[RMDB]
An RNA of 177 nucleotides, treated with DMS and read out base by base.
The reactions ran in a buffer of 150 mM KOAc, 10 mM MgCl2 and 150 mM bicine (pH 8.5), at 24 C.
RNA sequence: GGGAACGACUCGAGUAGAGUCGAAAACUUCAACCAAUUAAAGGUUGUACAACAACGAUCCAGUCGUCUCCAGUAUGGCUAAGAAAACCUCGAGGGUCCUCUAUUGUAUCCCCACAGUUUUCAGAAGGAAGCACUUCAAAUUCGUUUGAAGUGCUUCAAAAGAAACAACAACAACAAC
Reactivity to DMS in 0.01 (KOAc 150mM, MgCl2 10mM, bicine 150mM(pH8.5), 24C), signal-to-noise 1, nucleotides 027 to 126: c160u020u000c020a020a020c030c050a090a190u020u030a120a100a160g000g000u000u000g010u010a070c080a080a060c150a070a070c140g020a090u000c020c100a050g000u030c080g050u000c100u030c010c020a070g010u010a090u000g000g000c090u010a150a170g000a100a020a090a090c050c060u000c070g020a180g000g000g000u000c050c000u000c140u000a090u000u000g010u010a080u000c020c000c020c090a050c200a150g000u000u010u000u000c030a040g010a220a120g000